[RMDB]
RNA sequence: GGGAACGACUCGAGUAGAGUCGAAAAGAGCUCUUGAUGCGAUUGUAGACUGUUACAGCAUCAGCUAUCAGUCUGAGAUAGCUCAGGAUAGCUGGAGCUAUCUGCAACGGUGCAGACUCCAGUGACACCGUGAACAAUCGUUCAUGUCACAGAGCAGAAUAGUAGGGUACUUCGGUACCCUACUAUUAAAAGAAACAACAACAACAAC
Reactivity to 2A3 in 0.01 (KOAc 150mM, MgCl2 10mM, bicine 150mM(pH8.5), 24C), signal-to-noise 5, nucleotides 027 to 156: g070a040g000c010u000c000u010u030g010a010u080g020c000g000a000u000u010g020u030a020g010a060c020u020g070u130u190a110c100a070g010c010a120u170c120a140g020c020u020a030u050c000a020g070u000c030u030g020a020g030a090u070a030g030c000u010c020a030g020g070a200u090a080g060c020u050g030g010a010g000c030u040a040u040c010u020g020c020a060a100c090g140g060u060g000c010a010g040a190c020u050c060c040a010g030u000g050a020c010a010c030c000g030u020g010a020a000c000a000a010u030c010g020u100u140c080a070u140g020u030c010a040c050a060g010a020g010c020a010g090
Reactivity to DMS in 0.01 (KOAc 150mM, MgCl2 10mM, bicine 150mM(pH8.5), 24C), signal-to-noise 4, nucleotides 027 to 156: g010a150g010c000u000c000u010u010g010a090u000g030c000g010a060u000u010g010u010a080g010a050c010u010g020u000u000a070c070a060g000c010a180u000c180a110g040c010u000a020u000c000a100g010u000c080u000g010a120g000a090u000a030g020c000u010c030a110g010g000a120u010a160g010c000u020g000g010a020g010c020u000a040u000c010u010g030c030a100a100c080g010g000u000g030c010a110g000a200c030u000c030c060a100g020u010g010a110c050a030c030c030g000u010g020a100a050c000a050a060u000c040g030u000u020c070a090u000g010u000c010a070c100a040g000a050g030c000a100g000